An RNA of 207 nucleotides, treated with 2A3 and read out base by base. It was measured as part of the RMDB library OK3TST. Conditions: 150 mM KOAc, 10 mM MgCl2 and 150 mM bicine (pH 8.5), 24 C.
[RMDB]
RNA sequence: GGGAACGACUCGAGUAGAGUCGAAAAUGCAGAUUCUUGCUGGGUGUGGUGGCUCACGCCUAUAAUCCUAGCACUUUGGGAGGCCAAAGCAGGAGGAUCGCUUGAGCCUAGAAGUUCAAGACCAGCCUGGGCAACGUAGUGAGACCCUGUCUCUACACGCUCCUGAUAAUUUCGAUUAUCAGGAGCGAAAAGAAACAACAACAACAAC
Reactivity to 2A3 in 0.01 (KOAc 150mM, MgCl2 10mM, bicine 150mM(pH8.5), 24C), signal-to-noise 2, nucleotides 027 to 156: u110g020c010a050g080a290u140u170c020u110u040g030c030u020g030g040g030u060g030u090g100g030u040g010g000c000u000c030a020c040g000c000c000u110a080u150a090a040u030c010c000u040a050g050c090a090c120u060u050u010g000g000g040a150g040g000c000c000a010a060a080g020c040a010g000g080a000g030g000a060u060c020g000c030u010u000g020a000g000c010c030u060a080g040a140a030g050u110u070c110a090a010g070a070c000c020a000g040c000c000u050g030g000g000c020a060a050c100g030u000a010g040u050g060a000g000a080c000c020c020u040g050u030c020u010c000u040a020c060a000